[RMDB]
Source: RMDB library TTRDEL, as collected in RNAgym. Chemical mapping of a 177-nucleotide RNA with DMS and 2A3.
RNA sequence: GGGAACGACUCGAGUAGAGUCGAAAAGAUAUGGACUACCCACCUUAUGAACUACACUUAAGAAUCGGAAACGAUUCGGAGGUGCAUAAGAGGUCCUAAGUCAAACGCAUCACUUCGGUGAUGCGAAGCUUACUUACGUCUUCGGACGUAAGUAAGCAAAAGAAACAACAACAACAAC
Reactivity to DMS in 0.01 (KOAc 150mM, MgCl2 10mM, bicine 150mM(pH8.5), 24C), signal-to-noise 2, nucleotides 027 to 126: g010a070u010a160u000g020g020a020c000u000a170c000c000c080a300c140c010u000u010a000u000g000a080a040c070u030a300c010a030c010u010u000a260a170g000a010a000u000c010g000g000a100a070a250c010g040a020u000u000c000g000g010a100g000g000u010g010c000a000u000a010a020g000a110g010g010u030c000c000u010a070a170g000u000c050a020a060a290c010g000c010a000u000c000a000c000u000u040c230g000g030u030g020a030u000g020c000g000a000a080
Reactivity to 2A3 in 0.01 (KOAc 150mM, MgCl2 10mM, bicine 150mM(pH8.5), 24C), signal-to-noise 2, nucleotides 027 to 126: g020a010u120a070u140g020g000a010c000u210a250c030c000c020a010c030c000u010u010a010u030g010a060a030c120u180a040c300a000c020u080u050a050a040g020a020a000u010c010g000g000a060a050a020c000g000a000u000u000c000g010g010a000g030g030u010g000c000a000u000a000a030g020a030g020g020u000c000c020u010a220a010g070u070c100a070a040a040c030g050c010a000u000c000a010c010u050u140c300g130g000u010g000a000u000g000c000g000a000a000

Source information: For DMS, 1,489 sequencing reads were counted. The RNA was probed in 150 mM KOAc, 10 mM MgCl2 and 150 mM bicine (pH 8.5) at 24 C. The 2A3 profile rests on 3,182 reads.